[RMDB]
RNA sequence: GGGAACGACUCGAGUAGAGUCGAAAAUAGAAGAAGAGGCUAGGUGGUAUUCCGGUGUGGGAUACUUGGUAAUAUGUAACGCUAACUGCAUAAGAUUGUAGGACGGAAUUUACAGUCUUGGUUUUUAAAAACUUCUCGUAGUUCGCUACGAGAAGAACCCUCUAUAGCAGUUCGCUGCUAUAGAGGGAAAAGAAACAACAACAACAAC
Reactivity to 2A3 in 0.01 (KOAc 150mM, MgCl2 10mM, bicine 150mM(pH8.5), 24C), signal-to-noise 2, nucleotides 027 to 156: u090a020g050a070a000g020a060a000g030a000g010g030c060u110a020g040g060u030g030g000u060a050u050u040c030c030g050g010u100g030u110g100g060g000a040u020a070c000u020u030g000g020u040a010a050u100a070u200g070u100a050a050c100g000c080u040a090a090c040u060g020c030a040u010a120a030g000a060u050u030g020u050a020g030g030a010c100g020g020a060a030u040u070u050a070c020a010g030u000c000u010u110g030g030u010u000u030u060u160a040a140a010a030a050c000u000u010c000u000c010g000u000a000g010u050u000c080g000c120u000a000c000g000a000g000a000a000g000a010a000
Annotation: An RNA of 207 nucleotides, treated with 2A3 and read out base by base. Reactivities are given for positions 27 through 156. 2A3 is a SHAPE reagent: it acylates the 2'-hydroxyl of flexible nucleotides of all four kinds. For 2A3, 1,129 sequencing reads were counted. The RNA was probed in 150 mM KOAc, 10 mM MgCl2 and 150 mM bicine (pH 8.5) at 24 C. It was measured as part of the RMDB library M2RFPK.